[RMDB]
RNA sequence: GGGAACGACUCGAGUAGAGUCGAAAAGAAUAAGCAAAAAUGUGAUCUUGCUUGUAAAUACUAUUUUGAGAGGUUAAUAAAUUACAAGUAGUGCAAUUUUUGUCUCUCUCUGCAAUAACGAACCGAACGAGUAGUAUGCGUUCGCGCAUACUACUCGAAAAGAAACAACAACAACAAC
Reactivity to DMS in 0.01 (KOAc 150mM, MgCl2 10mM, bicine 150mM(pH8.5), 24C), signal-to-noise 1, nucleotides 027 to 126: g000a080a150u040a030a150g000c100a000a100a060a030a100u000g020u000g010a050u030c100u030u000g040c000u000u000g010u000a000a000a150u050a120c080u000a070u000u000u000u010g000a100g000a070g000g000u000u060a030a000u030a000a110a130u010u010a020c020a030a040g000u000a000g030u030g050c040a000a030u000u000u000u000u000g000u010c000u030c060u000c000u000c030u000g020c130a160a110u020a100a040c120g000a080a070c050c000g000a100a170
Reactivity to 2A3 in 0.01 (KOAc 150mM, MgCl2 10mM, bicine 150mM(pH8.5), 24C), signal-to-noise 2, nucleotides 027 to 126: g000a000a120u170a050a050g000c030a000a000a000a000a000u120g050u050g160a240u000c000u030u080g000c000u000u000g000u000a020a010a040u160a080c060u060a120u010u160u080u090g150a160g040a000g000g200u090u170a070a020u120a150a250a050u040u000a000c000a000a050g000u050a000g020u050g050c030a020a140u000u000u040u000u000g210u040c040u000c030u030c000u000c000u020g010c020a000a150u080a120a140c070g020a000a000c090c040g070a030a050
Conditions: 150 mM KOAc, 10 mM MgCl2 and 150 mM bicine (pH 8.5), 24 C. Structure probing data (DMS and 2A3) for a 177-nucleotide construct. For DMS, 1,241 sequencing reads were counted. For DMS the reverse transcriptase was MarathonRT.